Chemical mapping of a 177-nucleotide RNA with 2A3 and DMS. Reactivities are given for positions 27 through 126.

[RMDB]
RNA sequence: GGGAACGACUCGAGUAGAGUCGAAAAAGCUGCCCCAGUAGCCCAGUCGUUAGGUAUGUAACCUUUCCUUGUGAGAACGUUGGUUCGACUCCGCUUGCCGACAAUUUCAUAAGAAAAGUUGCAAAUCUGGUCUCACUAUUUUCGAAUAGUGAGACCAAAAAGAAACAACAACAACAAC
Reactivity to 2A3 in 0.01 (KOAc 150mM, MgCl2 10mM, bicine 150mM(pH8.5), 24C), signal-to-noise 3, nucleotides 027 to 126: a000g060c030u030g040c000c000c000c000a000g050u050a020g020c010c010c030a050g090u060c070g040u080u120a030g030g000u060a070u050g010u020a020a010c000c020u030u010u030c000c030u030u040g020u010g020a020g010a030a020c060g030u030u030g010g000u040u060c050g070a140c020u060c070c010g050c090u050u050g000c000c010g000a000c000a010a010u000u060u000c010a010u010a020a000g010a010a030a000a000g010u000u030g020c000a000a000a130u000c020
Reactivity to DMS in 0.01 (KOAc 150mM, MgCl2 10mM, bicine 150mM(pH8.5), 24C), signal-to-noise 3, nucleotides 027 to 126: a100g000c080u010g010c030c020c010c040a080g020u000a070g010c010c000c030a120g000u010c040g000u000u000a050g000g010u010a050u010g000u000a050a020c050c050u000u000u000c100c020u000u010g020u010g010a020g000a020a030c300g010u020u010g010g010u000u020c060g000a130c030u000c100c100g000c100u020u000g010c000c010g010a040c010a040a280u010u010u000c040a010u000a020a060g010a050a020a030a080g000u000u000g000c020a040a070a080u010c040

The 2A3 profile rests on 2,138 reads. 2A3 adducts were read by reverse transcription with SuperScript II with manganese.